[RMDB]
RNA sequence: GGGAACGACUCGAGUAGAGUCGAAAAGGAUUGGUUGCCUGGAAGCACAAAGGCAUUCUCUGUGGUGAUGCAAAUGUUCUUUAGUUUGGUCCGAGUCGUGGUUGCAUGUGUGGAUAGGCAGGUAAAACAAACUCCUUUUGUUCGCAAAAGGAGUUUGAAAAGAAACAACAACAACAAC
Reactivity to 2A3 in 0.01 (KOAc 150mM, MgCl2 10mM, bicine 150mM(pH8.5), 24C), signal-to-noise 1, nucleotides 027 to 126: g010g020a160u090u140g170g170u150u000g000c000c000u010g000g010a040a030g000c010a000c010a090a090a090g240g010c070a030u110u000c070u000c040u060g030u060g040g140u200g040a020u070g140c020a010a030a010u090g040u260u070c050u070u230u040a060g010u000u010u060g000g000u070c040c010g010a000g040u150c050g040u040g050g070u000u000g000c020a060u060g010u000g000u010g000g010a000u000a020g000g000c080a000g000g100u090a000a000a000a000
Reactivity to DMS in 0.01 (KOAc 150mM, MgCl2 10mM, bicine 150mM(pH8.5), 24C), signal-to-noise 3, nucleotides 027 to 126: g010g010a130u000u000g010g020u000u000g010c010c000u010g010g000a300a150g000c050a020c050a040a130a120g010g020c030a040u010u000c020u000c040u030g020u000g000g000u010g010a030u010g010c050a020a030a030u010g010u010u010c230u020u000u000a100g010u000u000u000g010g020u000c010c000g010a090g020u010c050g030u010g000g000u000u000g000c030a060u000g030u000g000u000g000g010a300u010a030g000g010c020a020g010g000u000a040a050a080a170

Chemical mapping of a 177-nucleotide RNA with 2A3 and DMS. The RNA was probed in 150 mM KOAc, 10 mM MgCl2 and 150 mM bicine (pH 8.5) at 24 C. DMS (dimethyl sulfate) methylates the pairing face of unpaired adenines and cytosines.